Structure probing data (2A3 and DMS) for a 207-nucleotide construct. The reactions ran in a buffer of 150 mM KOAc, 10 mM MgCl2 and 150 mM bicine (pH 8.5), at 24 C. For 2A3 the reverse transcriptase was SuperScript II with manganese. The DMS profile rests on 3,744 reads. For DMS the reverse transcriptase was MarathonRT. The data come from the RNA Mapping Database (RMDB), library OK3TST.

[RMDB]
RNA sequence: GGGAACGACUCGAGUAGAGUCGAAAACCAAUGGGAAACCAUUGGCAACUCGGAAACGAGUUGAACCGGGAAUUAGGCACAAAACCGGCGACAAUGCGAUUUUAAGCAUUGUCGAUUACGCCCAUGUCGAUUUUAAGACAUGGAGCGAAUGUGCCAAGGAUCUAGGUCCGUUCGCGGACUUGGAUCCAAAAGAAACAACAACAACAAC
Reactivity to 2A3 in 0.01 (KOAc 150mM, MgCl2 10mM, bicine 150mM(pH8.5), 24C), signal-to-noise 6, nucleotides 027 to 156: c000c000a000a000u010g000g000g010a050a020a020c000c000a000u000u000g010g000c000a000a000c000u000c010g000g050a150a080a070c010g000a010g000u000u010g010a060a050c010c000g010g000g030a080a180u220u170a220g030g000c000a000c000a010a010a020a070c000c000g000g000c000g000a000c000a000a000u000g020c030g150a180u030u070u120u300a100a010g000c000a000u010u000g000u000c000g000a000u000u030a050c000g000c000c000c000a000u000g000u000c010g050a100u030u090u080u300a110a030g000a000c000a000u000g000g000a030g000c000g000a010a010u060g000u000g000c000c000a000a010
Reactivity to DMS in 0.01 (KOAc 150mM, MgCl2 10mM, bicine 150mM(pH8.5), 24C), signal-to-noise 2, nucleotides 027 to 156: c000c010a010a020u000g000g000g010a240a110a230c000c000a000u000u010g000g000c000a010a030c000u010c000g000g040a250a230a300c000g030a030g040u000u000g020a110a130c010c000g000g030g000a180a230u000u000a070g000g020c000a030c000a190a080a110a160c040c010g000g010c000g000a020c000a010a000u000g010c000g020a180u010u030u000u000a140a280g000c030a000u000u000g000u000c000g000a050u000u000a050c030g040c010c000c010a000u000g000u000c000g000a260u000u000u000u020a070a180g000a010c000a020u000g010g010a060g020c000g010a040a000u010g020u000g000c010c000a060a300